RNA sequence: GGGAACGACUCGAGUAGAGUCGAAAAUAACCACAAAACUGUUCGUGAGUUGAUCUACAAACGUGGUUUUGGUAAGGUCAACAAGCAACGUAUUCCUUUGUCUGAUAACGCUAUCAUUGAAGCCGCAUCCUACUAGCCGGUUCGCCGGCUAGUAGGAAAAAGAAACAACAACAACAAC
Reactivity to DMS in 0.01 (KOAc 150mM, MgCl2 10mM, bicine 150mM(pH8.5), 24C), signal-to-noise 1, nucleotides 027 to 126: u000a110a160c040c060a130c160a070a080a100a070c100u000g010u000u000c130g090u000g020a300g000u020u000g020a010u000c020u000a070c070a000a060a000c010g080u000g000g000u000u000u000u000g000g000u040a020a090g010g010u010c030a000a050c010a070a200g000c010a020a070c050g100u000a080u000u020c020c030u000u000u000g020u000c110u000g010a050u020a040a140c090g000c050u000a070u000c080a050u020u010g000a070a100g000c000c030g010c140a120
Reactivity to 2A3 in 0.01 (KOAc 150mM, MgCl2 10mM, bicine 150mM(pH8.5), 24C), signal-to-noise 1, nucleotides 027 to 126: u090a050a030c040c010a020c050a010a110a060a010c100u200g020u030u030c050g000u000g050a020g020u000u000g000a000u050c030u090a110c080a000a100a030c100g270u290g070g090u220u050u050u030g100g050u050a050a110g010g020u020c030a000a000c030a000a000g000c000a000a010c000g010u000a080u020u100c020c010u190u200u040g210u060c130u030g010a170u100a130a000c050g010c120u040a030u200c000a120u200u180g060a060a060g000c010c060g040c030a030
An RNA of 177 nucleotides, treated with DMS and 2A3 and read out base by base. It was measured as part of the RMDB library OK2TST. The reactions ran in a buffer of 150 mM KOAc, 10 mM MgCl2 and 150 mM bicine (pH 8.5), at 24 C. For 2A3 the reverse transcriptase was SuperScript II with manganese.